[RMDB]
RNA sequence: GGGAACGACUCGAGUAGAGUCGAAAAGUAAAACAAGGAGUGGUAAACCUUGUUAAGUAUGCCAAAUAAAAAUCAAAGGCAGCAGCCCCGCAAAAAGGGGAAUGGCCAGUCAGUCAAUCAGCUGUGCCACCGCAUAUUACUUCGGUAAUAUGCGGUGAAAAGAAACAACAACAACAAC
Reactivity to DMS in 0.01 (KOAc 150mM, MgCl2 10mM, bicine 150mM(pH8.5), 24C), signal-to-noise 2, nucleotides 027 to 126: g010u010a070a090a060a010c000a010a010g030g010a030g000u010g010g000u020a120a240a030c000c000u000u000g010u010u000a060a100g000u000a070u000g020c010c020a040a160a170u070a030a070a040a090a090u020c150a020a090a130g010g010c010a020g020c090a130g000c000c000c000c020g000c130a020a020a040a150a060g000g000g010g000a070a030u000g000g000c000c020a060g000u000c070a070g010u000c130a070a070u000c170a120g010c020u000g000u000g030c050
Reactivity to 2A3 in 0.01 (KOAc 150mM, MgCl2 10mM, bicine 150mM(pH8.5), 24C), signal-to-noise 2, nucleotides 027 to 126: g020u020a070a040a090a000c000a020a000g000g000a010g030u060g000g080u100a000a070a070c010c010u010u000g010u010u000a050a010g020u010a040u110g010c010c010a080a170a040u180a020a120a030a010a000u130c020a030a130a070g040g010c000a010g000c000a010g020c010c010c040c000g000c050a130a170a020a020a010g000g030g010g000a000a060u080g070g000c000c010a010g100u040c000a020g060u010c000a000a130u040c010a020g000c000u040g030u170g110c020
Chemical mapping of a 177-nucleotide RNA with DMS and 2A3.
Reactivities are given for positions 27 through 126.
The 2A3 profile rests on 1,661 reads.
Values are in units of 0.01, from 0 to 300, in steps of 10.
For DMS the reverse transcriptase was MarathonRT.